[RMDB]
RNA sequence: GGGAACGACUCGAGUAGAGUCGAAAAGAUUCGGCGGCCCUGUCAUGAGGCCGAAACGAAGGCACGUACCCCUUCGUAUGGCGUCGGGGAGUCAGCGGCUAUAUAUGCGCCUAAUGCUGGCAUCCGGGAGAACCCUCAUCCUUCGGGAUGAGGGUAAGAUUUAAGAAACCUUCGGGUUUCUUAAAUCAAAAGAAACAACAACAACAAC
Reactivity to 2A3 in 0.01 (KOAc 150mM, MgCl2 10mM, bicine 150mM(pH8.5), 24C), signal-to-noise 1, nucleotides 027 to 156: g050a040u050u080c100g020g000c000g020g030c050c010c000u040g170u080c120a130u080g030a080g040g000c000c000g040a000a000a020c010g020a020a000g020g010c100a000c160g190u250a100c030c050c000c000u030u000c010g050u030a060u150g080g000c100g060u030c030g000g000g000g040a130g000u000c000a000g000c020g020g000c010u030a030u040a040u060a150u300g120c070g000c070c020u140a180a060u290g000c000u000g030g000c000a090u000c000c000g020g000g000a070g020a000a010c000c000c000u000c000a000u000c000c000u000u090c170g100g010g000a020u000g000a010g000g010g000u000a000a000
Reactivity to DMS in 0.01 (KOAc 150mM, MgCl2 10mM, bicine 150mM(pH8.5), 24C), signal-to-noise 1, nucleotides 027 to 156: g010a190u000u000c100g010g020c000g010g000c010c030c000u000g000u000c220a180u000g000a090g020g030c020c010g000a030a080a050c020g030a040a020g010g000c050a200c080g000u020a160c040c060c010c020u010u000c020g010u000a060u000g030g000c020g020u000c060g020g000g040g000a150g040u000c010a050g050c010g020g000c030u000a120u000a100u010a030u010g010c060g010c000c040u010a070a140u000g020c000u020g010g010c020a060u000c000c010g010g000g010a190g010a100a060c020c000c030u000c010a060u030c000c000u000u000c300g040g000g020a050u000g000a000g000g010g020u000a000a020
Conditions: 150 mM KOAc, 10 mM MgCl2 and 150 mM bicine (pH 8.5), 24 C. The record gives the reactivity of an RNA of 207 nucleotides to 2A3 and DMS. It was measured as part of the RMDB library M2RFPK. 2A3 adducts were read by reverse transcription with SuperScript II with manganese. High 2A3 reactivity points to a flexible backbone, as in loops and unpaired stretches. The 2A3 profile rests on 515 reads.